[RMDB]
RNA sequence: GGGAACGACUCGAGUAGAGUCGAAAACUCAACUGACAUACAAGGGGAGGUUUCGGCCAAAUGUUGUAUGCAGAAAGCGUGAGGAAGGUAGGACUUAGACACUCACGAGUAGCGGUUCGGCAGUAGUAAAGGUCCUGGCGCUUCGGCGCCAGGACAAUCACUACAUUGGGUUCGCCCAAUGUAGUGAAAAAGAAACAACAACAACAAC
Reactivity to 2A3 in 0.01 (KOAc 150mM, MgCl2 10mM, bicine 150mM(pH8.5), 24C), signal-to-noise 2, nucleotides 027 to 156: c020u010c010a000a090c040u010g030a130c000a030u060a010c010a050a040g000g020g000g020a070g010g050u010u050u130c170g090g020c000c020a050a030a030u200g050u120u000g010u000a030u020g000c000a000g090a090a050a000g070c010g020u040g010a050g020g060a190a060g070g000u110a060g070g060a020c020u110u120a070g030a060c060a020c020u030c000a040c020g000a070g030u020a010g000c060g010g110u090u100c000g090g000c100a090g000u130a010g010u070a060a180a130g160g010u060c000c010u000g010g000c010g000c000u050u080c200g080g000c030g000c020c000a000g020g020a000c000a000a050
Reactivity to DMS in 0.01 (KOAc 150mM, MgCl2 10mM, bicine 150mM(pH8.5), 24C), signal-to-noise 1, nucleotides 027 to 156: c010u000c070a140a110c050u010g000a140c000a090u000a050c050a040a110g020g030g020g000a300g040g040u000u010u010c060g000g000c020c040a030a190a150u020g010u000u000g010u020a020u010g020c000a070g020a080a100a100g010c050g000u000g000a020g010g000a090a100g000g010u000a110g030g000a110c070u000u010a060g020a150c020a090c050u000c050a080c040g020a110g000u000a070g020c040g000g020u000u000c050g000g000c040a050g060u000a090g020u000a070a070a160g010g010u000c010c000u000g010g030c000g080c010u000u000c240g110g110c000g100c020c000a010g010g000a000c010a010a020